[RMDB]
RNA sequence: GGGAACGACUCGAGUAGAGUCGAAAAUUUACUGCCUUGGCUGCCCCCUACUCCCAGCAUACCUUAGGUUUCAAUUGUUCUGCGAGGGGAGAUGGGAGUAUGGAAGGGAGGCAGGGAAAGAGGAUGCUUUAUACUUCUUAGCACUGACUAUGGGAUAAGCCUUUUAAUUAUUCGUAAUUAAAAGGCUAAAAGAAACAACAACAACAAC
Reactivity to DMS in 0.01 (KOAc 150mM, MgCl2 10mM, bicine 150mM(pH8.5), 24C), signal-to-noise 2, nucleotides 027 to 156: u000u010u010a080c050u000g020c020c000u010u000g050g040c020u000g000c010c040c020c010c000u000a090c000u000c000c010c000a110g060c030a140u000a160c020c010u010u000a300g030g010u000u000u010c060a090a110u000u000g030u000u000c050u000g000c090g000a110g040g010g000g010a150g010a110u000g010g020g000a010g000u000a010u000g010g000a140a120g020g030g020a050g040g010c010a040g000g020g000a090a070a110g000a110g010g010a100u000g010c060u000u010u000a140u010a140c060u000u000c030u010u000a070g010c040a090c090u000g020a080c050u000a050u000g020g000g010a120u000a130
Reactivity to 2A3 in 0.01 (KOAc 150mM, MgCl2 10mM, bicine 150mM(pH8.5), 24C), signal-to-noise 3, nucleotides 027 to 156: u110u050u040a140c040u030g030c000c010u030u050g130g080c020u130g150c010c000c000c000c000u000a010c010u000c020c000c000a010g000c020a060u150a200c000c010u020u070a030g010g120u040u060u160c050a110a110u180u210g020u090u090c030u020g090c110g070a030g010g000g010g000a110g010a000u000g000g000g000a000g010u010a010u160g010g000a040a080g000g000g000a010g020g000c010a000g010g000g020a000a230a000g050a010g030g010a050u100g030c020u070u130u050a080u080a130c030u060u150c010u020u120a010g000c010a040c130u110g150a140c050u160a080u240g030g010g030a040u230a150